[RMDB]
RNA sequence: GGGAACGACUCGAGUAGAGUCGAAAAAGAAUGCCGGUAUGAGUAGCGCAAGAUAAGUGAGAAUCUUAUCCACCGUAAGACUAAGGUUUCCAGGGGAAGGCUCGUCCGCCCUGGGUUAGUCGGGACCCCUAACACAGAAGUUCGCUUCUGUGUUAGGAAAAGAAACAACAACAACAAC
Reactivity to DMS in 0.01 (KOAc 150mM, MgCl2 10mM, bicine 150mM(pH8.5), 24C), signal-to-noise 5, nucleotides 027 to 126: a060g010a130a080u000g020c030c010g000g000u000a050u000g020a090g010u000a090g000c060g010c140a110a120g010a020u000a020a030g020u000g000a190g000a250a150u010c010u000u010a030u000c020c120a120c160c060g010u010a090a100g000a030c030u010a020a060g010g010u010u000u020c000c000a020g000g000g000g000a090a060g020g010c080u010c300g000u010c020c020g010c010c000c010u010g000g000g010u000u000a010g010u000c020g000g000g010a210c110c060
Reactivity to 2A3 in 0.01 (KOAc 150mM, MgCl2 10mM, bicine 150mM(pH8.5), 24C), signal-to-noise 3, nucleotides 027 to 126: a010g120a050a020u090g040c020c040g000g030u150a110u170g110a080g060u090a030g040c020g000c090a020a060g000a020u020a010a000g000u010g040a040g050a080a060u070c000u010u020a010u000c000c010a030c040c000g060u060a080a040g000a010c010u020a030a110g160g040u030u140u090c010c010a010g020g000g010g100a300a160g060g000c040u080c160g070u100c010c000g240c020c000c020u000g000g020g000u000u020a000g000u000c000g000g020g040a030c040c020